[RMDB]
Chemical mapping of a 177-nucleotide RNA with 2A3 and DMS. The 2A3 profile rests on 3,277 reads. 2A3 is a SHAPE reagent: it acylates the 2'-hydroxyl of flexible nucleotides of all four kinds. For DMS the reverse transcriptase was MarathonRT. Conditions: 150 mM KOAc, 10 mM MgCl2 and 150 mM bicine (pH 8.5), 24 C. For DMS, 2,982 sequencing reads were counted.
RNA sequence: GGGAACGACUCGAGUAGAGUCGAAAAGGAAGCAGAAAAACUGUUCCGGAUCCGGGAGGCGGAAGAAACAAAAAACAACCUGAUGCAGGUAGCCAGUGAGCAUAUUGCGCCGCUUCAGGAUGCUGCAACCUGUAAUAACGUUCGCGUUAUUACAGGUAAAAGAAACAACAACAACAAC
Reactivity to 2A3 in 0.01 (KOAc 150mM, MgCl2 10mM, bicine 150mM(pH8.5), 24C), signal-to-noise 3, nucleotides 027 to 126: g040g000a050a010g060c030a010g080a110a160a020a050a060c010u010g010u040u020c010c010g000g020a030u020c020c000g030g100g010a060g020g030c050g040g030a050a010g080a080a130a030c100a050a110a040a010a010a030c030a000a020c010c000u000g010a040u080g020c100a130g040g030u070a080g020c050c030a060g080u070g110a080g060c070a060u070a070u270u130g020c040g000c010c000g000c000u010u010c010a010g000g010a030u040g040c030u050g020c020a030
Reactivity to DMS in 0.01 (KOAc 150mM, MgCl2 10mM, bicine 150mM(pH8.5), 24C), signal-to-noise 3, nucleotides 027 to 126: g000g000a060a070g010c010a010g000a110a110a090a100a150c040u000g010u000u000c020c000g000g000a180u000c060c030g020g020g010a070g010g010c080g010g020a050a040g020a050a060a080c090a010a070a040a060a050a080c060a090a070c010c020u000g000a060u000g010c020a060g020g000u000a040g040c070c060a070g010u000g000a110g000c080a100u010a090u000u000g010c100g000c020c020g000c040u000u000c010a050g000g000a040u000g000c040u000g000c160a190